[RMDB]
RNA sequence: GGGAACGACUCGAGUAGAGUCGAAAAGCAUGCAGCGACGUUCGAUCAGGUCGACACCCGGCGUGGGUUCGACUUGUUUGGUCACCGACAGCGACUCACCGGUGAGCGCGGACUCGUCGACCUCCACCUUCUACUAUAGCUUCGGCUAUAGUAGAAGAAAAGAAACAACAACAACAAC
Reactivity to 2A3 in 0.01 (KOAc 150mM, MgCl2 10mM, bicine 150mM(pH8.5), 24C), signal-to-noise 9, nucleotides 027 to 126: g070c040a030u190g040c050a020g020c020g030a030c050g040u050u080c010g020a070u060c030a020g020g010u010c000g010a010c020a080c110c000c010g190g070c180g160u300g030g010g000u020u020c000g010a020c000u010u020g020u020u050u090g040g010u030c010a020c030c020g040a040c050a060g050c020g100a080c020u020c050a040c020c030g050g020u070g030a060g080c100g000c020g030g030a050c010u020c060g030u020c020g030a060c010c000u030c010c010a060c010
Reactivity to DMS in 0.01 (KOAc 150mM, MgCl2 10mM, bicine 150mM(pH8.5), 24C), signal-to-noise 4, nucleotides 027 to 126: g020c130a050u030g010c120a100g000c020g000a070c090g020u010u010c050g000a080u010c030a020g010g000u000c000g010a050c150a030c010c010c000g020g010c220g030u060g000g010g010u010u000c010g000a000c010u000u000g010u000u000u010g000g000u010c060a080c040c010g000a050c130a100g000c030g000a060c040u000c040a100c090c040g000g010u010g000a040g000c030g000c020g010g000a020c100u010c080g000u010c030g000a100c030c010u020c030c060a110c150
Structure probing data (2A3 and DMS) for a 177-nucleotide construct. 2A3 adducts were read by reverse transcription with SuperScript II with manganese. The data come from the RNA Mapping Database (RMDB), library OK1LIB.